[RMDB]
RNA sequence: GGGAACGACUCGAGUAGAGUCGAAAAAUUGGGACGCAGGCGCGGAGCCCAGGGACCACUCCCCCUGCACAGACAUGAGACCAUAGGGGACCUGUCUGGGUGGCCUCAGGGAUAGGCGCUCCCCAAGAAAUGUCAAUACUUUCGAGUAUUGACAUUUAAAAGAAACAACAACAACAAC
Reactivity to DMS in 0.01 (KOAc 150mM, MgCl2 10mM, bicine 150mM(pH8.5), 24C), signal-to-noise 8, nucleotides 027 to 126: a120u010u000g000g010g000a120c180g020c210a090g000g010c010g020c030g000g010a190g020c010c000c010a060g010g000g000a050c010c000a030c030u000c020c010c020c010c050u020g010c070a120c060a020g000a030c030a010u020g010a100g010a260c020c010a170u030a120g020g010g000g000a160c070c020u000g000u000c010u010g010g000g010u000g000g000c010c000u000c010a060g000g000g000a050u020a140g000g000c010g010c000u000c170c010c000c010a030a040g000
Reactivity to 2A3 in 0.01 (KOAc 150mM, MgCl2 10mM, bicine 150mM(pH8.5), 24C), signal-to-noise 9, nucleotides 027 to 126: a010u050u020g010g010g000a030c090g040c190a050g050g000c010g000c020g060g040a050g060c010c000c000a000g030g000g020a090c000c010a010c030u070c010c010c000c000c030u100g040c090a040c020a050g080a020c050a070u250g040a090g040a140c040c030a070u220a130g050g010g000g020a020c010c020u040g040u030c040u030g020g010g000u010g010g000c000c000u020c050a080g020g010g000a040u070a050g100g000c000g000c000u060c000c000c000c000a010a010g030